An RNA of 177 nucleotides, treated with DMS and 2A3 and read out base by base. For DMS, 2,518 sequencing reads were counted. Reactivities are rounded to 0.1 and cut off at 0 and 3. Source: RMDB library OK2TST, as collected in RNAgym. For 2A3, 1,690 sequencing reads were counted.
RNA sequence: GGGAACGACUCGAGUAGAGUCGAAAAUAUGUCCGGUGCCCUAAGAAGCGCUGUGCUGGCAUUGAAGUCCCUGGAGGGCCCCAGAGAAGUGACUCGAUCUGUGAGCCGUUUCUCCCAAGACAUGCGGACGUCUAGGUAAGUUCGCUUACCUAGACGUAAAAGAAACAACAACAACAAC
Reactivity to DMS in 0.01 (KOAc 150mM, MgCl2 10mM, bicine 150mM(pH8.5), 24C), signal-to-noise 3, nucleotides 027 to 126: u000a040u000g030u000c000c020g030g000u000g010c010c010c020u010a130a170g010a160a260g010c040g000c050u000g010u000g030c090u000g000g010c010a070u010u000g000a150a180g000u000c000c020c010u010g000g020a120g000g000g000c070c060c020c010a060g010a060g010a080a130g000u010g000a020c010u000c000g000a190u020c050u000g010u020g010a030g010c030c010g000u000u000u000c020u000c020c010c040a100a130g020a100c130a070u010g000c130g000g010
Reactivity to 2A3 in 0.01 (KOAc 150mM, MgCl2 10mM, bicine 150mM(pH8.5), 24C), signal-to-noise 2, nucleotides 027 to 126: u150a020u020g030u000c000c040g000g000u000g000c000c000c030u050a110a060g040a130a010g040c030g000c060u060g050u080g090c140u100g000g010c020a030u030u050g060a060a030g050u040c000c000c000u020g050g020a040g020g020g000c000c010c030c020a000g040a000g050a090a020g040u060g100a010c000u000c010g100a190u130c040u040g160u080g110a020g000c050c000g000u010u040u000c010u020c010c000c000a030a030g040a050c090a080u170g100c060g060g080